[RMDB]
RNA sequence: GGGAACGACUCGAGUAGAGUCGAAAAGGAGACGACGUUGAGGAAUCGAUUGAAAACUACACUUCUAUUGCGCAGAGAAAACGUCAAAACAUUCAGCACAUUUUAAUGGAUUGGUACAAUUUUGUUUACGAUUUUCGCAAAUAUUUCGGCGUUUAACGAUUGGAUAUCUAUUCGUAGAUAUCCAAUCAAAAGAAACAACAACAACAAC
Reactivity to DMS in 0.01 (KOAc 150mM, MgCl2 10mM, bicine 150mM(pH8.5), 24C), signal-to-noise 5, nucleotides 027 to 156: g000g000a100g010a100c060g030a090c050g040u010u010g010a110g020g010a090a100u010c050g010a160u010u000g000a070a060a070a120c070u000a060c030a060c030u000u000c060u010a090u000u000g000c020g010c040a120g000a200g000a070a030a030a040c030g000u000c020a070a030a050a060c060a110u000u000c080a110g020c030a080c090a080u000u000u000u000a060a130u010g000g000a090u000u000g030g010u010a070c070a050a120u000u000u000u010g010u000u000u000a050c040g000a160u000u000u000u010c050g020c020a060a060a050u000a070u000u000u000c050g030g000c020g020u000u010u000a080a100c170
Reactivity to 2A3 in 0.01 (KOAc 150mM, MgCl2 10mM, bicine 150mM(pH8.5), 24C), signal-to-noise 9, nucleotides 027 to 156: g080g020a060g010a030c070g000a010c050g020u060u090g040a040g030g060a070a070u090c060g040a050u050u120g030a050a060a020a020c070u190a040c050a030c070u090u050c060u070a100u060u140g040c060g000c060a010g040a000g020a110a080a020a010c020g020u020c000a020a050a040a050c030a040u100u140c060a020g070c030a020c020a090u050u100u120u230a110a080u080g050g020a040u060u080g040g010u090a040c050a060a080u050u090u060u120g050u030u060u050a030c030g020a080u060u010u030u070c020g000c050a030a080a060u110a090u070u090u070c040g040g000c030g010u050u080u090a050a010c050
The record gives the reactivity of an RNA of 207 nucleotides to DMS and 2A3. For 2A3, 7,757 sequencing reads were counted. Conditions: 150 mM KOAc, 10 mM MgCl2 and 150 mM bicine (pH 8.5), 24 C. For DMS the reverse transcriptase was MarathonRT. Source: RMDB library OK3TST, as collected in RNAgym. The DMS profile rests on 10,992 reads.